Chemical mapping of a 177-nucleotide RNA with DMS and 2A3. Values are in units of 0.01, from 0 to 300, in steps of 10. For 2A3, 1,378 sequencing reads were counted. Values cover nucleotides 27 to 126. The data come from the RNA Mapping Database (RMDB), library M2PK50. Conditions: 150 mM KOAc, 10 mM MgCl2 and 150 mM bicine (pH 8.5), 24 C.
[RMDB]
RNA sequence: GGGAACGACUCGAGUAGAGUCGAAAAUAAAUCUUAUUCGUAAGAUUUACUUGAACGCUGCAACCGGCAGCGCGCUCGCUUGCGCACGCACGCGCAAUAAAAAUCUGGGGACAUUCGUGUCCCCAAAACUAGGUAGAUUGUUCGCAAUCUACCUAGUAAAAGAAACAACAACAACAAC
Reactivity to DMS in 0.01 (KOAc 150mM, MgCl2 10mM, bicine 150mM(pH8.5), 24C), signal-to-noise 3, nucleotides 027 to 126: u000a000a000a000u000c000u000u000a010u000u020c180g020u000a010a010g000a020u000u000u010a000c100u000u020g010a090a090c020g020c010u000g010c010a130a150c200c190g010g000c000a030g000c000g020c170g000c030u000c040g020c110u000u010g000c010g040c000a040c130g010c260a010c170g000c000g020c020a040a040u020a010a060a060a100a070u010c180u000g000g000g030g000a010c000a020u010u000c200g010u010g000u000c000c010c000c000a000a010a030
Reactivity to 2A3 in 0.01 (KOAc 150mM, MgCl2 10mM, bicine 150mM(pH8.5), 24C), signal-to-noise 1, nucleotides 027 to 126: u020a010a000a000u040c000u020u010a010u030u090c100g060u010a000a010g000a000u010u020u010a060c030u040u060g030a080a000c000g020c010u010g010c050a130a300c100c080g270g000c010a000g010c000g030c010g010c030u070c030g090c060u030u010g000c000g010c020a010c030g200c040a000c070g030c000g000c010a000a050u100a060a170a000a010a000u040c110u100g000g030g000g010a010c000a000u010u150c180g060u030g010u040c000c000c000c000a000a000a000